RNA sequence: GGGAACGACUCGAGUAGAGUCGAAAAGGUGACGAGGGUGCUGGCAAGAUUCCGGCUGAGUCAGCAUUGGCAGGCGGCCAGGCAGCUAGCAAGGAAGGCAAGGCAUUUCAGCAGCCGCUGAAGCAGACCAUACAUGAUCUUUCGAGAUCAUGUAUGGAAAAGAAACAACAACAACAAC
Reactivity to 2A3 in 0.01 (KOAc 150mM, MgCl2 10mM, bicine 150mM(pH8.5), 24C), signal-to-noise 4, nucleotides 027 to 126: g040g010u050g030a050c050g030a080g030g010g040u030g010c020u030g020g000c030a050a060g030a170u140u000c040c000g030g000c040u050g000a020g040u040c020a020g000c030a080u050u100g080g000c030a030g030g030c020g010g000c010c020a020g030g000c010a010g010c010u060a010g000c000a050a030g050g030a040a040g000g030c040a020a040g060g000c060a120u000u110u080c030a040g000c020a030g150c080c140g000c020u020g010a030a010g010c010a000g030a040
Reactivity to DMS in 0.01 (KOAc 150mM, MgCl2 10mM, bicine 150mM(pH8.5), 24C), signal-to-noise 7, nucleotides 027 to 126: g000g010u010g010a080c090g000a110g010g010g010u000g000c030u000g000g010c050a080a080g000a210u010u010c060c030g000g010c030u000g010a160g010u010c040a040g020c050a100u000u000g020g020c030a090g020g010c110g000g000c040c040a070g010g010c100a090g000c030u000a050g000c050a070a100g010g000a070a060g010g000c070a060a100g000g010c050a100u000u010u000c030a040g010c020a170g010c120c120g000c010u000g000a040a060g020c130a110g010a220